Source: RMDB library OK1LIB, as collected in RNAgym.
This 177-nucleotide RNA was probed chemically with DMS and 2A3.
Reactivities are given for positions 27 through 126.
2A3 is a SHAPE reagent: it acylates the 2'-hydroxyl of flexible nucleotides of all four kinds.
The reactions ran in a buffer of 150 mM KOAc, 10 mM MgCl2 and 150 mM bicine (pH 8.5), at 24 C.
[RMDB]
RNA sequence: GGGAACGACUCGAGUAGAGUCGAAAACGCUGGCAUAUUGCCGUGUGGUGGUCUCUGGUUCAAAGGACCCUGUGGAAUAGUUUGUGAGGGCGAAGGGUGAUGGCAGGACUGUCGUGCCGGCACAGACUCGCCAGGAGUCAUUCGUGACUCCUGGCGAAAAAGAAACAACAACAACAAC
Reactivity to DMS in 0.01 (KOAc 150mM, MgCl2 10mM, bicine 150mM(pH8.5), 24C), signal-to-noise 1, nucleotides 027 to 126: c140g070c020u000g000g000c000a110u050a040u040u010g030c070c030g000u000g010u010g020g020u020g000g000u000c020u060c030u000g000g000u040u000c070a080a040a090g000g000a100c010c010c030u000g080u040g000g000a080a030u000a110g000u030u000u000g000u000g000a110g030g020g000c050g050a050a060g000g000g020u030g000a080u000g000g000c010a020g000g010a070c050u000g000u010c000g050u060g010c000c070g000g020c070a030c030a050g000a120c090
Reactivity to 2A3 in 0.01 (KOAc 150mM, MgCl2 10mM, bicine 150mM(pH8.5), 24C), signal-to-noise 2, nucleotides 027 to 126: c030g000c020u150g050g000c120a080u080a070u300u300g000c000c100g000u080g000u030g090g060u130g000g050u010c020u040c000u090g090g020u120u030c150a120a120a080g020g080a070c000c000c000u030g080u030g000g130a260a100u020a080g050u000u030u050g120u090g070a060g080g050g030c030g050a020a090g000g000g030u180g010a140u070g060g010c000a000g000g150a050c060u040g000u000c040g020u010g080c010c000g110g000c000a020c000a000g020a050c000